This 177-nucleotide RNA was probed chemically with 2A3 and DMS. The RNA was probed in 150 mM KOAc, 10 mM MgCl2 and 150 mM bicine (pH 8.5) at 24 C. For 2A3 the reverse transcriptase was SuperScript II with manganese. It was measured as part of the RMDB library RFM100.
RNA sequence: GGGAACGACUCGAGUAGAGUCGAAAAGAACAGUCCCCGAUAGAAAUGAGUAUCGGAAAUGGUGCGUGUUCCGUUCGAUACUGCAACGGCUGUGGGGAAAAAUAUACCCCAUGCGCCGAAAGGCAGAGACUUUGUCAUCCUUCGGGAUGACAAAGUCAAAAGAAACAACAACAACAAC
Reactivity to 2A3 in 0.01 (KOAc 150mM, MgCl2 10mM, bicine 150mM(pH8.5), 24C), signal-to-noise 2, nucleotides 027 to 126: g030a000a000c000a040g100u080c000c000c020c010g000a030u060a040g300a080a090a100u300g040a040g230u060a030u000c030g000g070a050a070a190u240g050g030u200g130c120g050u020g010u000u030c040c010g080u020u050c000g000a050u000a230c000u000g030c000a000a180c040g000g020c000u040g000u000g000g030g000g000a010a020a020a010a020u300a050u120a040c020c010c020c020a000u050g090c170g010c000c000g000a050a080a000g070g000c000a000g010a000
Reactivity to DMS in 0.01 (KOAc 150mM, MgCl2 10mM, bicine 150mM(pH8.5), 24C), signal-to-noise 1, nucleotides 027 to 126: g030a100a100c210a120g000u000c060c000c000c070g060a070u000a010g020a010a140a100u020g000a150g060u000a000u000c000g000g000a140a120a090u060g000g040u000g000c120g000u030g010u000u000c000c080g000u000u000c000g000a100u030a170c000u000g000c000a080a090c020g020g030c030u000g000u000g010g000g000g000a000a110a060a050a200u010a280u020a090c020c000c000c000a000u000g000c200g010c000c000g000a040a100a150g000g000c010a010g000a190